[RMDB]
Structure probing data (DMS and 2A3) for a 177-nucleotide construct.

RNA sequence: GGGAACGACUCGAGUAGAGUCGAAAAUGUUCGGAGCCAUGAAGGGCGGCGGAGAGUUCUGGGGGACGGACAUCCGACACUUCAACGGCGGCCUGUUCGACAGUGAAGACGCCCUGGCCCUGACCUCCAUAGGGGCAAAAUUCGUUUUGCCCCUAUGAAAAGAAACAACAACAACAAC
Reactivity to DMS in 0.01 (KOAc 150mM, MgCl2 10mM, bicine 150mM(pH8.5), 24C), signal-to-noise 6, nucleotides 027 to 126: u010g010u000u000c030g010g000a080g010c020c020a170u010g030a190a060g010g010g020c030g020g010c020g010g000a130g010a140g010u010u000c020u000g020g010g020g020g010a130c140g010g000a010c010a090u000c000c000g010a130c150a100c130u010u000c060a060a060c080g010g010c070g000g000c060c070u000g010u000u000c030g010a070c040a080g020u000g010a090a100g010a300c040g000c010c000c020u000g000g010c000c010c000u000g000a050c030c040u000c040
Reactivity to 2A3 in 0.01 (KOAc 150mM, MgCl2 10mM, bicine 150mM(pH8.5), 24C), signal-to-noise 3, nucleotides 027 to 126: u090g020u050u030c030g020g000a050g000c000c010a070u130g190a120a090g030g020g000c040g010g010c010g010g010a060g010a020g040u140u080c050u150g050g000g000g020g030a020c040g000g010a000c010a020u030c010c000g050a060c030a030c080u110u130c050a100a030c040g030g010c020g000g040c030c020u080g030u060u030c040g070a020c020a020g030u010g050a050a010g040a020c000g000c010c030c000u010g010g000c010c000c010u020g000a020c000c010u000c000
The DMS profile rests on 9,199 reads. Conditions: 150 mM KOAc, 10 mM MgCl2 and 150 mM bicine (pH 8.5), 24 C. 2A3 is a SHAPE reagent: it acylates the 2'-hydroxyl of flexible nucleotides of all four kinds.